[RMDB]
RNA sequence: GGGAACGACUCGAGUAGAGUCGAAAAUGACAAACCCAUAGUGAUGUAAUAAUGAAUGGGCAAAAGUGGGAAGUAUUCCCCUUGAAAACUGGCACAAGACAAGGAUGCCCUCCCUCACCACUCCUAUUCAACAUAGUAUUGAAAGUUCUAGCCAGGAGGCGUAUAAUUAGUUCGCUAAUUAUACGCCAAAAGAAACAACAACAACAAC
Reactivity to 2A3 in 0.01 (KOAc 150mM, MgCl2 10mM, bicine 150mM(pH8.5), 24C), signal-to-noise 1, nucleotides 027 to 156: u160g040a010c050a000a090a040c020c020c020a080u060a060g110u120g070a080u170g040u140a120a140u110a180a080u050g060a010a020u100g000g000g000c020a030a080a030a140g040u080g010g000g050a000a010g060u010a050u170u020c000c030c000c000u040u000g060a060a020a020a060c030u050g060g010c020a020c010a070a000g050a050c020a070a050g040g000a000u040g000c050c050c000u050c020c000c000u050c000a010c040c010a040c020u050c000c000u050a040u040u020c000a010a020c000a110u110a040g110u110a090u110u120g010a090a020a000g000u050u000c010u010a000g030c000c000a000g040g010a010
Reactivity to DMS in 0.01 (KOAc 150mM, MgCl2 10mM, bicine 150mM(pH8.5), 24C), signal-to-noise 2, nucleotides 027 to 156: u010g020a130c100a080a150a160c030c000c000a140u020a080g020u020g040a070u000g020u000a110a090u000a160a100u010g010a080a050u010g010g000g060c160a090a000a140a020g000u000g030g000g010a070a050g000u000a120u020u000c000c000c050c060u000u000g020a050a010a090a120c000u030g000g100c000a270c070a060a040g000a120c090a180a170g000g040a070u010g000c030c010c050u000c040c030c020u000c010a100c050c020a060c040u000c000c040u000a120u000u000c040a040a070c100a050u000a110g010u010a150u010u000g000a080a070a130g030u010u000c000u000a190g020c000c010a050g040g000a140